[RMDB]
This 177-nucleotide RNA was probed chemically with 2A3 and DMS. Conditions: 150 mM KOAc, 10 mM MgCl2 and 150 mM bicine (pH 8.5), 24 C. For DMS, 692 sequencing reads were counted.
RNA sequence: GGGAACGACUCGAGUAGAGUCGAAAAUGUGGUUCCUUCGGGAACCACACACUACCGAGAAUGAUCCUCGGUAUUUAAAUCAAACCCUUGGAAACAAGGGAACACUCCCUAGCUUCGGCUAGGGAAAGAAAUCUUUGAACUUCGGUUCAAAGAUUUCAAAAGAAACAACAACAACAAC
Reactivity to 2A3 in 0.01 (KOAc 150mM, MgCl2 10mM, bicine 150mM(pH8.5), 24C), signal-to-noise 1, nucleotides 027 to 126: u080g000u010g000g000u000u010c000c000u030u020c210g010g000g000a000a020c000c000a010c000a000c010a000c000u050a020c010c010g020a000g020a120a300u190g030a060u070c020c000u000c000g010g000u010a010u010u090u010a010a030a030u160c070a000a080a300c000c000c000u000u000g000g000a030a060a010c000a010a010g000g000g010a000a000c000a010c030u000c000c000c000u010a010g010c000u030u050c250g050g000c000u000a000g000g010g000a000a000a000
Reactivity to DMS in 0.01 (KOAc 150mM, MgCl2 10mM, bicine 150mM(pH8.5), 24C), signal-to-noise 1, nucleotides 027 to 126: u010g030u000g000g000u000u000c000c000u010u000c210g080g000g060a000a010c010c000a000c000a000c280a040c250u000a010c000c010g010a020g000a120a130u000g000a140u000c120c000u010c000g000g000u000a000u000u000u000a100a170a150u010c150a100a110a130c010c000c000u000u000g000g000a150a160a170c000a000a000g010g000g000a100a020c070a090c190u000c000c000c000u000a000g000c000u000u000c160g000g000c000u000a000g000g000g000a000a000a140